Structure probing data (2A3) for a 177-nucleotide construct.
Reactivities are rounded to 0.1 and cut off at 0 and 3.
The RNA was probed in 150 mM KOAc, 10 mM MgCl2 and 150 mM bicine (pH 8.5) at 24 C.
RNA sequence: GGGAACGACUCGAGUAGAGUCGAAAAUAGGGAAAUGGAAAACAGGAGAACAAAUGAACUUGGUUUCAGAAUAGUUGCAUUUGUGAUCGUAAUGCCACAUGGAUUCAGAGAUCAGAAGAGAGAUGCGCGUCGUGGUGGCGUUCGCGCCACCACGACGAAAAGAAACAACAACAACAAC
Reactivity to 2A3 in 0.01 (KOAc 150mM, MgCl2 10mM, bicine 150mM(pH8.5), 24C), signal-to-noise 1, nucleotides 027 to 126: u110a000g000g000g030a000a200a030u160g190g000a020a040a180a040c000a000g000g030a000g050a080a000c000a000a140a000u030g000a000a000c000u090u060g070g300u150u240u130c050a050g000a250a070u220a000g080u000u160g120c000a000u110u060u060g000u090g000a060u000c000g090u160a000a300u140g000c000c000a000c000a060u190g000g000a080u080u000c000a000g030a000g000a000u110c030a000g120a090a000g020a000g000a000g000a080u220g090c000g000